[RMDB]
An RNA of 207 nucleotides, treated with 2A3 and DMS and read out base by base. Values are in units of 0.01, from 0 to 300, in steps of 10. For DMS the reverse transcriptase was MarathonRT. 2A3 adducts were read by reverse transcription with SuperScript II with manganese. For DMS, 2,091 sequencing reads were counted. Conditions: 150 mM KOAc, 10 mM MgCl2 and 150 mM bicine (pH 8.5), 24 C. For 2A3, 1,151 sequencing reads were counted.
RNA sequence: GGGAACGACUCGAGUAGAGUCGAAAAAGGAAAUGGGAGACCUAUGGUACUGAUAUAAUGUGGGCUGGGCUUGUUUUCUGUCAUUUGCUAGAUAAAUGAACUUGAGAGCCUACUGUAAAAUGUGGAAGCUUCUAGAUUGCAGAAGGGCUGGAAAGACCCAAUUAUACGACUUCGGUCGUAUAAUUGGAAAAGAAACAACAACAACAAC
Reactivity to 2A3 in 0.01 (KOAc 150mM, MgCl2 10mM, bicine 150mM(pH8.5), 24C), signal-to-noise 2, nucleotides 027 to 156: a030g080g000a040a060a020u130g020g000g030a060g000a030c010c050u100a150u070g010g000u020a020c060u080g090a030u040a020u030a200a160u140g000u030g000g010g010c030u050g020g160g050c030u030u030g040u030u120u060u100c070u060g070u020c030a080u030u090u070g030c030u090a060g030a140u110a090a060a050u070g000a030a020c020u110u050g020a080g000a020g100c000c000u000a000c000u010g020u050a060a100a130a110u150g030u070g040g000a060a060g020c000u000u000c000u000a010g000a050u020u240g000c000a010g010a030a000g000g000g000c000u000g000g000a000a000a000g000a020c010
Reactivity to DMS in 0.01 (KOAc 150mM, MgCl2 10mM, bicine 150mM(pH8.5), 24C), signal-to-noise 1, nucleotides 027 to 156: a060g000g000a070a060a150u010g020g020g020a210g040a100c040c000u000a130u010g010g020u000a070c040u020g000a230u000a070u000a030a080u010g040u000g010g030g060c020u000g030g020g000c000u010u010g010u000u000u010u000c020u000g000u020c070a230u020u000u000g000c050u000a080g020a120u010a040a020a040u000g020a020a020c040u010u010g010a290g000a040g040c010c000u000a020c060u020g000u010a050a070a110a100u000g010u010g030g010a190a160g010c040u010u020c030u010a070g010a090u010u010g010c010a030g020a080a040g000g010g040c020u000g000g000a050a040a020g000a140c150